[RMDB]
RNA sequence: GGGAACGACUCGAGUAGAGUCGAAAAGUGAGGCCUCUUCCCAGGUCCGGAGUCGACCUCCAUCUGAUCCGUCCGGGGCCUCUUCGCCGGGGGAGCCCCCUCCCCGUCCUUCCCUUUUCUGAUUAUUACCCCCGGUACUUCGGUACCGGGAAAAGAAACAACAACAACAAC
Reactivity to 2A3 in 0.01 (KOAc 150mM, MgCl2 10mM, bicine 150mM(pH8.5), 24C), signal-to-noise 3, nucleotides 027 to 129: g180u120g000a050g010g020c000c000u020c000u060u040c000c030c000a020g000g000u010c020c090g050g000a020g030u060c040g040a160c000c010u030c000c000a050u070c060u080g050a020u040c030c030g060u050c040c040g030g020g000g000c000c000u000c000u040u020c000g000c000c010g060g000g000g000g090a040g010c000c000c000c000c010u010c000c010c010c000g060u030c010c010u000u030c000c000c000u040u070u000u060c100u080g100a130u010u120a080u100u220a300c000c000
Reactivity to DMS in 0.01 (KOAc 150mM, MgCl2 10mM, bicine 150mM(pH8.5), 24C), signal-to-noise 2, nucleotides 027 to 129: g040u020g050a070g020g020c030c000u010c020u030u030c000c000c000a190g040g070u020c020c130g050g000a000g000u040c070g090a120c070c030u020c030c030a090u020c110u040g050a090u020c000c150g030u050c130c120g040g000g020g060c050c020u030c000u010u040c090g000c060c010g000g000g000g000g000a090g030c050c020c000c040c080u010c010c020c010c020g010u030c030c080u020u020c000c020c040u030u000u100u080c050u070g020a100u080u020a140u030u080a020c060c070